Source: RMDB library M2PK50, as collected in RNAgym. Structure probing data (DMS and 2A3) for a 177-nucleotide construct. The RNA was probed in 150 mM KOAc, 10 mM MgCl2 and 150 mM bicine (pH 8.5) at 24 C. For 2A3, 3,420 sequencing reads were counted. Reactivities are rounded to 0.1 and cut off at 0 and 3. 2A3 adducts were read by reverse transcription with SuperScript II with manganese.
[RMDB]
RNA sequence: GGGAACGACUCGAGUAGAGUCGAAAAGUCCCCACUUUCGAGUGGGGACAAUCAAAGUUUAGGCACUCGCAGCCCGCAGCGUUGGUGCUCCCACGCGGUGCAUAACUGCCUACUUCGGUAGGCAGAAGCUGUUGUGAUUAUUCGUAAUCACAACAGCAAAAGAAACAACAACAACAAC
Reactivity to DMS in 0.01 (KOAc 150mM, MgCl2 10mM, bicine 150mM(pH8.5), 24C), signal-to-noise 2, nucleotides 027 to 126: g020u000c000c000c000c010a000c000u000u000u010c160g020a000g070u010g000g000g010g000a000c000a010a050u000c110a100a070a150g010u000u000u000a040g020g010c020a040c020u010c070g030c040a170g020c020c010c010g030c100a060g010c050g010u000u000g010g000u010g020c080u000c010c020c060a110c160g000c050g040g020u000g010c040a030u000a050a160c020u000g010c000c000u000a000c020u000u020c140g010g020u000a010g000g000c010a000g020a040a060
Reactivity to 2A3 in 0.01 (KOAc 150mM, MgCl2 10mM, bicine 150mM(pH8.5), 24C), signal-to-noise 3, nucleotides 027 to 126: g000u000c010c000c000c000a000c010u100u090u090c230g100a000g000u010g000g010g000g000a010c010a000a000u100c020a010a020a050g050u080u220u180a090g040g020c020a010c040u090c090g060c040a040g020c000c000c040g000c080a100g010c070g070u150u170g050g090u190g040c010u090c000c000c000a030c010g010c030g000g030u040g000c010a040u110a240a070c000u000g000c000c000u000a000c000u020u060c160g080g010u000a000g010g000c010a000g010a000a010